This 177-nucleotide RNA was probed chemically with DMS and 2A3.
For 2A3 the reverse transcriptase was SuperScript II with manganese.
The data come from the RNA Mapping Database (RMDB), libraries RFM100 and RFMREP.
RNA sequence: GGGAACGACUCGAGUAGAGUCGAAAAUGUCAUGCUUUUCCACAGCUUUCUUGAACUUCUUCUUCUUCUUCUUCUUCUUCUUAGAUUUCUUUCUCAUUGCCUAUAUCUUUCUUGAUGUGGCACAGAAAUCCUACUUUUUUUUCGAAAAAAGUAGGAUAAAAGAAACAACAACAACAAC
Reactivity to DMS in 0.01 (KOAc 150mM, MgCl2 10mM, bicine 150mM(pH8.5), 24C), signal-to-noise 4, nucleotides 027 to 126: u010g010u000c080a080u020g010c030u000u000u010u010c030c020a100c150a120g020c040u000u000u010c030u000u000g020a130a110c060u010u010c020u010u000c010u010u010c010u000u000c000u010u000c020u000u000c020u010u000c020u000u000c010u000u010a080g010a150u000u000u000c030u000u000u000c020u000c060a120u030u010g010c010c010u030a050u010a020u000c010u000u030u020c140u020u000g000a020u000g010u010g000g020c020a070c300a080g000a070a090
Reactivity to 2A3 in 0.01 (KOAc 150mM, MgCl2 10mM, bicine 150mM(pH8.5), 24C), signal-to-noise 9, nucleotides 027 to 126: u140g030u050c020a050u100g040c020u070u060u050u030c020c010a040c020a060g020c000u030u070u040c010u040u100g080a120a060c010u010u020c000u020u010c000u010u000c000u020u000c000u010u000c000u020u000c000u030u000c000u050u000c000u020u060a100g020a170u150u060u010c010u010u070u000c040u010c020a140u110u110g000c000c020u110a060u020a020u090c020u030u300u050c100u110u100g000a010u010g010u020g010g010c020a000c000a020g130a020a090